Chemical mapping of a 177-nucleotide RNA with DMS and 2A3. It was measured as part of the RMDB library M2PK50.

[RMDB]
RNA sequence: GGGAACGACUCGAGUAGAGUCGAAAACGACUUACCUUCGGGUAAGUCGACAUAGGUGAGUUCAUCGGAUAGCUGCCUAGGUGAGUUCAUCGCAUAGCUGCCACAUGUAACGGUUCGCCGUUACAAAAUAGUCUCACGAAUUCGUUCGUGAGACUAUAAAAGAAACAACAACAACAAC
Reactivity to DMS in 0.01 (KOAc 150mM, MgCl2 10mM, bicine 150mM(pH8.5), 24C), signal-to-noise 3, nucleotides 027 to 126: c030g040a010c000u000u000a000c000c000u000u000c160g030g020g000u000a000a000g000u000c000g020a020c100a050u010a080g010g000u000g010a040g000u000u000c030a030u010c010g010g000a120u010a110g010c110u010g000c010c020u000a140g000g000u000g000a030g000u000u000c020a020u000c000g030c190a070u000a100g010c100u010g020c020c030a090c160a150u000g010u010a000a000c000g000g000u010u010c270g010c000c010g010u010u000a000c020a040a020a100
Reactivity to 2A3 in 0.01 (KOAc 150mM, MgCl2 10mM, bicine 150mM(pH8.5), 24C), signal-to-noise 2, nucleotides 027 to 126: c010g010a000c000u000u020a000c000c000u020u060c220g040g020g010u000a000a000g010u000c000g000a000c030a060u140a020g010g010u030g020a020g020u010u020c010a020u030c070g040g000a080u070a090g080c070u110g080c070c010u060a090g030g000u000g000a000g010u000u040c000a030u020c020g000c010a090u140a090g010c060u060g040c020c020a090c020a080u090g000u010a000a000c000g030g000u030u050c160g000c000c000g000u010u000a000c040a000a010a000
The DMS profile rests on 2,413 reads. For 2A3, 2,115 sequencing reads were counted. Conditions: 150 mM KOAc, 10 mM MgCl2 and 150 mM bicine (pH 8.5), 24 C.